[RMDB]
RNA sequence: GGGAACGACUCGAGUAGAGUCGAAAAGGAUCUGAGUACUUAUAAGUGCGAAGUGAGUGAGGGUCUUACGAGCACAAAUUACAACCCUCUAUUAAGUAUCGAAGAUCGGCCGGAGAUCGAGAUACAACUAUUAGCCGGCGACUGUACGAAGAUCCGAGAUCACUAUGGAGUUCGCUCCAUAGUGAUCAAAAGAAACAACAACAACAAC
Reactivity to 2A3 in 0.01 (KOAc 150mM, MgCl2 10mM, bicine 150mM(pH8.5), 24C), signal-to-noise 4, nucleotides 027 to 156: g000g000a000u000c000u010g000a000g000u000a010c020u120u080a120u120a300a060g000u000g000c010g030a070a000g020u020g010a000g000u070g010a000g000g000g010u070c000u000u020a000c000g000a020g010c030a020c020a060a190a140u240u130a080c060a040a040c000c010c000u000c000u020a110u100u140a150a020g000u000a000u010c010g010a040a010g010a030u010c030g050g000c000c010g000g010a110g000a020u010c020g000a000g000a060u010a010c000a030a000c020u080a060u280u120a060g060c000c000g010g000c010g030a040c100u080g010u010a000c000g000a000a010g000a000u000c000c000g000a000
Reactivity to DMS in 0.01 (KOAc 150mM, MgCl2 10mM, bicine 150mM(pH8.5), 24C), signal-to-noise 2, nucleotides 027 to 156: g050g020a040u000c010u000g030a300g090u000a020c030u040u000a120u030a060a170g020u020g000c040g000a180a260g010u010g010a080g040u000g000a160g000g060g040u000c020u010u000a050c090g000a300g050c200a040c060a040a040a140u000u000a070c080a020a020c030c000c020u000c000u000a080u010u000a030a080g010u000a020u000c000g000a160a180g000a040u000c020g040g000c100c030g050g020a300g020a030u000c050g000a300g000a040u000a010c040a060a140c180u000a080u000u010a170g000c000c040g000g000c070g000a180c150u010g000u000a020c010g000a160a170g010a130u000c010c000g030a030